This 177-nucleotide RNA was probed chemically with 2A3 and DMS.
Reactivities are given for positions 27 through 126.
For DMS the reverse transcriptase was MarathonRT.
It was measured as part of the RMDB library M2PK50.
Conditions: 150 mM KOAc, 10 mM MgCl2 and 150 mM bicine (pH 8.5), 24 C.
[RMDB]
RNA sequence: GGGAACGACUCGAGUAGAGUCGAAAAGCUAUACCGUUCGCGGUAUAGCAAAAUCUUUCCGAGAUGUACUAAUACCAGCCUAUUAGUCAACGGUUCGAGUCCAAACGGGUUACUUCGGUAACCCGAACGUUUAAUUCCAGUUCGCUGGAAUUAAACGAAAAGAAACAACAACAACAAC
Reactivity to 2A3 in 0.01 (KOAc 150mM, MgCl2 10mM, bicine 150mM(pH8.5), 24C), signal-to-noise 2, nucleotides 027 to 126: g000c010u000a000u010a000c000c020g030u010u050c300g010c000g100g010u000a010u000a010g020c000a010a010a000a000u000c010u010u040u020c010c000g040a060g010a120u050g060u160a020c020u010a020a010u020a050c100c100a050g060c010c030u010a010u040u030a000g030u000c020a080a030c030g010g010u040u020c020g030a050g060u000c020c020a050a080a100c040g020g020g010u010u000a010c010u050u040c190g060g000u010a010a000c020c040c000g020a010a000
Reactivity to DMS in 0.01 (KOAc 150mM, MgCl2 10mM, bicine 150mM(pH8.5), 24C), signal-to-noise 3, nucleotides 027 to 126: g000c000u010a000u000a000c010c010g020u010u020c190g010c010g000g010u000a000u000a020g010c000a020a020a070a100u010c060u000u010u000c010c000g020a120g010a100u010g010u010a030c020u000a020a010u000a040c050c050a170g010c150c180u000a020u000u000a000g000u000c020a050a080c030g000g000u000u000c040g000a080g010u000c000c020a030a110a200c010g010g010g000u000u000a000c000u000u020c170g020g000u000a000a020c000c000c000g000a000a030